[RMDB]
RNA sequence: GGGAACGACUCGAGUAGAGUCGAAAAUUGUGGUCAAGACCUUGGCGUAGUAUCCAAGGUUGUCUAGGUUCCUAUUGACUUAACAAUGAUUGAGUUUAUGUUAUGGUGUAAGGAUGGACAGGGGAAAUGUUGGAUAGAUCUUCGGAUCUAUCCAACAAAAAGAAACAACAACAACAAC
Reactivity to DMS in 0.01 (KOAc 150mM, MgCl2 10mM, bicine 150mM(pH8.5), 24C), signal-to-noise 2, nucleotides 027 to 126: u000u000g040u010g010g010u000c070a090a100g010a020c000c000u000u000g000g000c290g010u000a160g000u020a130u000c000c000a040a010g000g030u000u000g020u000c090u000a130g010g030u000u000c010c030u000a120u010u000g000a050c010u010u010a080a040c050a080a040u000g000a120u000u010g010a120g010u000u000u000a040u000g020u010u000a040u010g010g010u000g010u000a040a090g000g000a090u000g010g020a030c050a090g010g000g010g000a100a080a090

Source: RMDB library M2PK90, as collected in RNAgym.
The record gives the reactivity of an RNA of 177 nucleotides to DMS.
For DMS, 2,022 sequencing reads were counted.
The reactions ran in a buffer of 150 mM KOAc, 10 mM MgCl2 and 150 mM bicine (pH 8.5), at 24 C.